The data come from the RNA Mapping Database (RMDB), library OK1LIB. Chemical mapping of a 177-nucleotide RNA with 2A3 and DMS. As a SHAPE reagent, 2A3 marks flexible, mostly unpaired nucleotides at the ribose 2'-OH. Values cover nucleotides 27 to 126. In probing experiments dimethyl sulfate is read out at A N1 and C N3, which are open when not base-paired. Values are in units of 0.01, from 0 to 300, in steps of 10. The reactions ran in a buffer of 150 mM KOAc, 10 mM MgCl2 and 150 mM bicine (pH 8.5), at 24 C. The DMS profile rests on 1,582 reads.
[RMDB]
RNA sequence: GGGAACGACUCGAGUAGAGUCGAAAAUUUACAAUCAUGCCUAAGGGAUUUGGCUCUGAAAACAAUAAUGCCCUUAAGAUGGCACUUCCAGCUGAAGGAAUAGAAGGUGUUAAGGACUUUGUUGUGGAGCAGCCAUUAUAUUCGUAUAAUGGCUGCUAAAAGAAACAACAACAACAAC
Reactivity to 2A3 in 0.01 (KOAc 150mM, MgCl2 10mM, bicine 150mM(pH8.5), 24C), signal-to-noise 1, nucleotides 027 to 126: u050u010u170a070c150a180a130u170c010a040u000g030c000c000u160a070a160g160g000g000a050u050u000u000g200g000c000u000c030u240g050a080a020a000a000c090a100a100u210a090a010u140g210c000c000c000u010u000a010a000g170a130u100g030g030c000a000c130u000u000c000c000a000g070c060u000g020a080a000g140g000a020a110u000a030g090a220a000g000g020u030g030u230u000a070a080g000g090a000c000u010u130u060g010u000u000g100u110g050g100
Reactivity to DMS in 0.01 (KOAc 150mM, MgCl2 10mM, bicine 150mM(pH8.5), 24C), signal-to-noise 1, nucleotides 027 to 126: u000u030u050a100c110a250a040u090c150a070u000g000c070c000u000a200a060g030g000g010a030u000u000u030g000g000c000u090c040u000g030a120a040a040a050c040a050a000u010a050a030u030g010c000c000c010u000u000a130a100g020a040u000g000g000c050a070c150u000u000c020c060a080g000c170u050g010a090a110g000g000a120a100u050a060g010a070a110g000g010u000g000u080u010a040a050g000g010a000c000u010u010u000g000u030u000g010u000g000g000